[RMDB]
RNA sequence: GGGAACGACUCGAGUAGAGUCGAAAAGCGUCGGAUAAAGCUCUUAAUGAGAUCGAGGCUCUUAAAAAGCGCAUUGCAGAGCUUGAAUCGGCAGGAACGGCAUCAACUGUUAUUCCAGAAGUUGAAGAAGAUCUUUACGAAGCAAUGACAGAGGCUGUCGUUGCUAGUUUUUCGAAACUAGCAACGAAAAAGAAACAACAACAACAAC
Reactivity to DMS in 0.01 (KOAc 150mM, MgCl2 10mM, bicine 150mM(pH8.5), 24C), signal-to-noise 2, nucleotides 027 to 156: g010c100g030u000c030g030g040a110u000a040a040a110g000c000u000c010u010u000a080a130u010g000a010g000a150u000c050g000a200g020g000c040u000c050u000u000a060a050a100a090a050g020c000g030c030a120u000u000g060c110a050g010a050g000c000u000u010g020a090a100u010c010g050g000c030a090g010g010a040a060c060g020g120c020a110u000c090a060a160c070u000g030u000u000a140u000u000c050c030a140g000a060a160g030u010u000g000a050a120g020a040a230g000a120u000c020u000u000u000a190c050g000a130a180g000c040a050a030u000g000a100c060a030g000a050g040g010c000u000g000
Reactivity to 2A3 in 0.01 (KOAc 150mM, MgCl2 10mM, bicine 150mM(pH8.5), 24C), signal-to-noise 2, nucleotides 027 to 156: g060c030g010u010c030g050g020a060u100a050a060a000g010c000u020c000u060u070a070a040u160g050a080g030a120u130c110g030a080g090g000c000u000c020u130u150a150a150a060a040a000g040c020g010c050a010u000u050g040c060a010g010a000g020c000u010u040g020a100a040u070c020g010g000c010a020g000g070a060a040c010g040g000c010a050u030c020a080a080c020u000g030u100u090a070u070u050c020c010a020g020a130a020g060u090u150g020a010a010g050a060a020g060a070u050c000u000u100u020a070c100g060a070a010g000c020a040a050u050g020a010c010a020g040a030g070g000c050u040g040

This 207-nucleotide RNA was probed chemically with DMS and 2A3. For 2A3 the reverse transcriptase was SuperScript II with manganese. The 2A3 profile rests on 1,400 reads.